Notes
Chemical mapping of a 177-nucleotide RNA with DMS and 2A3. DMS adducts were read by reverse transcription with MarathonRT. The reactions ran in a buffer of 150 mM KOAc, 10 mM MgCl2 and 150 mM bicine (pH 8.5), at 24 C. It was measured as part of the RMDB library OK2TST.

[RMDB]
RNA sequence: GGGAACGACUCGAGUAGAGUCGAAAAUUCUAAAAUUUGUUGUUUACCUAAAACAAUAAUUUGAUCUGCAUGUUGAAUCGUAGAUAACCGAUGUGCAAUAACAAUCAAUGUUUUAUCCUGCGUCAACCAGUACCAAUUUGUUCGCAAAUUGGUACUGAAAAGAAACAACAACAACAAC
Reactivity to DMS in 0.01 (KOAc 150mM, MgCl2 10mM, bicine 150mM(pH8.5), 24C), signal-to-noise 2, nucleotides 027 to 126: u000u000c060u010a040a070a060a100u000u000u000g030u010u010g000u000u000u000a120c150c130u010a080a030a030a020c000a020a050u000a030a040u000u000u000g020a070u010c160u000g020c090a030u000g020u000u000g020a060a100u030c050g000u010a090g020a070u000a090a100c210c070g030a030u010g010u000g030c040a030a050u000a060a110c090a030a100u000c080a020a070u010g000u000u000u010u000a020u010c060c020u000g010c080g010u000c090a030a100c190
Reactivity to 2A3 in 0.01 (KOAc 150mM, MgCl2 10mM, bicine 150mM(pH8.5), 24C), signal-to-noise 1, nucleotides 027 to 126: u050u080c000u030a000a010a080a090u000u050u130g000u000u000g010u010u030u090a140c030c020u060a060a030a000a000c040a010a000u070a100a030u160u050u040g070a040u000c010u090g000c020a040u020g010u040u020g050a100a050u120c050g050u080a080g000a140u050a060a110c050c020g020a030u040g010u030g040c000a050a120u070a090a130c030a070a000u040c000a000a050u070g020u000u000u000u060a030u130c020c060u020g030c030g000u020c080a040a020c070